This 177-nucleotide RNA was probed chemically with 2A3 and DMS.
Values cover nucleotides 27 to 126.
It was measured as part of the RMDB libraries RFM100 and RFMREP.
The RNA was probed in 150 mM KOAc, 10 mM MgCl2 and 150 mM bicine (pH 8.5) at 24 C.
RNA sequence: GGGAACGACUCGAGUAGAGUCGAAAAUCCUUCCACUCACUCCACAAGGCUCUUUUCUUCCAGCUCAGCAUGCCCAGUGGUUUUGAACAGGGAGGCAGUGUGGGGUAGUGGAAAGAAGGCCAGCUUCUUUGAUAUACGAAUUCGUUCGUAUAUCAAAAAAAGAAACAACAACAACAAC
Reactivity to 2A3 in 0.01 (KOAc 150mM, MgCl2 10mM, bicine 150mM(pH8.5), 24C), signal-to-noise 9, nucleotides 027 to 126: u020c000c000u000u000c000c000a000c000u030c020a030c000u010c000c000a010c010a030a020g060g000c010u050c030u170u090u090u020c010u040u010c010c010a050g030c040u040c040a050g030c030a070u160g030c020c010c020a040g040u130g050g000u050u030u070u110g020a020a010c010a020g050g070g050a050g080g030c030a040g050u000g000u010g020g000g010g000u000a000g000u000g000g000a000a000a000g010a000a000g070g050c130c080a060g040c060u030u000c000
Reactivity to DMS in 0.01 (KOAc 150mM, MgCl2 10mM, bicine 150mM(pH8.5), 24C), signal-to-noise 7, nucleotides 027 to 126: u010c010c020u000u000c000c000a010c000u000c170a010c010u000c000c000a010c010a040a050g000g000c010u020c090u010u010u020u010c040u010u000c030c020a090g020c040u000c030a050g000c080a050u010g000c020c010c060a160g020u000g000g010u000u010u010u010g020a040a050c110a100g000g000g010a030g000g010c020a030g030u000g010u000g000g000g010g010u000a010g000u000g000g000a010a020a020g010a040a070g010g010c050c070a130g010c060u000u010c070